[RMDB]
Chemical mapping of a 177-nucleotide RNA with DMS.
Conditions: 150 mM KOAc, 10 mM MgCl2 and 150 mM bicine (pH 8.5), 24 C.
For DMS, 800 sequencing reads were counted.
RNA sequence: GGGAACGACUCGAGUAGAGUCGAAAAGGUUUGCACUGAGGACAAGCUGGGUACAUUUUUAGCAGAUCUGAAGUGUCUGUGGAGCUCCAAGACCCACAGCCUAGAAACGGAAGCUCUGGGCUUCCAGAACGGUAUAGACCUUCGGGUCUAUACCGUUAAAAGAAACAACAACAACAAC
Reactivity to DMS in 0.01 (KOAc 150mM, MgCl2 10mM, bicine 150mM(pH8.5), 24C), signal-to-noise 1, nucleotides 027 to 126: g030g000u000u020u000g010c020a070c010u000g020a300g000g000a060c110a120a080g020c010u000g000g010g000u020a060c170a090u000u000u000u000u030a050g010c020a060g000a140u000c000u000g010a220a060g010u000g000u000c020u020g030u020g000g000a130g010c090u000c100c080a070a090g010a150c070c000c000a020c080a000g020c040c060u000a100g000a020a010a100c150g050g000a010a020g010c020u000c170u010g020g020g010c020u010u000c000c020a090g020